[RMDB]
RNA sequence: GGGAACGACUCGAGUAGAGUCGAAAAGCGAGGCACAAGUCACUCGAGCAAUUGCAAAGGAUUGGGGUAACGAAUUUAUUGAUCGCGUCGACACGGAGGUCAUUAUUGUUGGAGGUGGACCAUCAGGACUUGUUACAGCCAAGGAACUUGCCGAACGCGUUAUGGACUUCUUCGGAAGUCCAUAACGAAAAGAAACAACAACAACAAC
Reactivity to 2A3 in 0.01 (KOAc 150mM, MgCl2 10mM, bicine 150mM(pH8.5), 24C), signal-to-noise 2, nucleotides 027 to 156: g060c020g040a020g050g010c010a050c010a120a090g030u070c000a010c110u020c020g020a040g040c050a110a100u160u150g040c090a160a060a090g010g020a080u080u130g040g010g000g010u030a070a000c060g030a090a150u070u110u110a080u100u220g020a000u030c000g010c000g150u060c050g040a030c000a010c110g050g020a070g000g050u030c020a030u010u220a030u110u100g010u070u050g040g010a080g000g100u090g000g010a040c010c030a030u030c000a030g040g040a070c000u000u000g020u030u110a090c080a010g050c010c010a000a000g010g000a020a090c000u010u080g020c030c020g050a080a080c020g020
Reactivity to DMS in 0.01 (KOAc 150mM, MgCl2 10mM, bicine 150mM(pH8.5), 24C), signal-to-noise 1, nucleotides 027 to 156: g020c060g030a100g090g030c050a080c020a050a110g030u000c020a130c000u000c040g010a140g050c060a050a120u000u010g010c000a060a040a080g020g010a130u010u010g050g020g060g030u000a030a190c060g030a160a060u000u020u010a100u020u000g000a010u010c050g000c050g070u000c010g010a070c000a110c040g000g000a170g020g020u000c020a100u040u000a090u010u010g010u010u010g030g000a150g000g040u000g050g000a080c060c010a090u010c060a130g040g030a030c020u010u010g020u000u000a090c070a020g000c050c010a070a090g000g030a180a160c020u000u000g000c020c010g010a030a100c140g000